[RMDB]
RNA sequence: GGGAACGACUCGAGUAGAGUCGAAAACAUCAAAGCUUACGUGUAAGCUUGUAGCUUUAGCUUUUAAAAAUGCAUUUUUGACAUUUAAGUGGAGUAUGGUUGCUAGAGGUGCUUGCAUUAUAGCGACUAUCAAGCAUUAAUUCGUUAAUGCUUGAUAAAAAGAAACAACAACAACAAC
Reactivity to 2A3 in 0.01 (KOAc 150mM, MgCl2 10mM, bicine 150mM(pH8.5), 24C), signal-to-noise 9, nucleotides 027 to 126: c020a060u140c080a090a030a010g000c010u020u020a020c060g050u030g010u060a020a010g000c000u030u060g060u040a010g020c000u070u050u050a040g010c000u060u070u080u160a090a250a020a010a010u050g010c000a070u060u070u060u110u190g090a100c010a010u000u040u080a130a060g070u080g060g020a020g030u070a060u100g070g030u060u040g000c010u020a030g010a060g190g090u070g020c010u020u030g000c000a020u050u040a060u100a040g010c010g030a000c010
Reactivity to DMS in 0.01 (KOAc 150mM, MgCl2 10mM, bicine 150mM(pH8.5), 24C), signal-to-noise 9, nucleotides 027 to 126: c060a120u010c120a090a080a110g010c000u000u000a070c210g010u010g010u000a020a020g010c010u000u000g010u000a070g010c040u000u000u000a080g010c030u000u000u000u010a010a080a040a030a020u000g010c020a080u000u000u010u010u000g010a110c020a020u000u000u000a050a110g020u010g000g010a110g010u000a060u000g010g010u000u000g010c010u000a040g010a110g010g010u000g010c020u000u000g000c010a020u000u000a160u000a030g010c010g010a080c190

Structure probing data (2A3 and DMS) for a 177-nucleotide construct. 2A3 adducts were read by reverse transcription with SuperScript II with manganese. The RNA was probed in 150 mM KOAc, 10 mM MgCl2 and 150 mM bicine (pH 8.5) at 24 C. For 2A3, 21,916 sequencing reads were counted.